Source information: An RNA of 177 nucleotides, treated with 2A3 and read out base by base.
RNA sequence: GGGAACGACUCGAGUAGAGUCGAAAAUGUGCCACUUCGGUGCGCAGAUGGGCGAGGUGUCCGGUCCCAUGAGUCAAAAGCCGGUAAGAACCUCUGGCCCGAGGUCGCUCGUCAGGACUGGACCACUGGACACCAGUGGUUUCGACCACUGGUGUCCAAAAGAAACAACAACAACAAC
Reactivity to 2A3 in 0.01 (KOAc 150mM, MgCl2 10mM, bicine 150mM(pH8.5), 24C), signal-to-noise 1, nucleotides 027 to 126: u080g010u030g020c030c030a100c000u080u070c200g140g000u000g000c000g010c000a000g060a120u110g000g120g000c060g060a120g020g020u090g000u000c010c010g000g000u000c020c000c000a000u090g000a000g060u040c060a250a000a000a000g160c090c080g000g000u000a010a000g050a060a040c000c000u000c030u050g100g040c050c010c000g000a000g010g010u030c040g000c000u010c010g020u010c100a040g000g020a030c000u000g000g020a000c000c000a010c000u000